[RMDB]
RNA sequence: GGGAACGACUCGAGUAGAGUCGAAAAGAUAUGGACCUGAACACUCGCAAGCACUAUCCUUUGUUGCUUCGGAAACGAAGCAACAAAGGACGAAUGCUUGAACUACGAGACGAAGGGUCCUAAGUCAUCAACUCACUUUGUUCGCAAAGUGAGUUGAAAAAGAAACAACAACAACAAC
Reactivity to DMS in 0.01 (KOAc 150mM, MgCl2 10mM, bicine 150mM(pH8.5), 24C), signal-to-noise 2, nucleotides 027 to 126: g000a030u000a300u000g000g000a010c000c010u000g000a080a240c300a280c000u000c000g060c000a060a070g000c000a020c050u000a230u000c010c000u000u010u000g000u000u010g050c000u100u000c020g040g040a090a110a240c030g000a030a000g010c000a000a000c000a000a000a060g000g000a000c120g010a040a050u000g040c000u000u000g070a130a070c200u050a300c010g020a000g030a060c000g010a270a230g000g000g020u020c010c000u000a020a100g000u000c070a120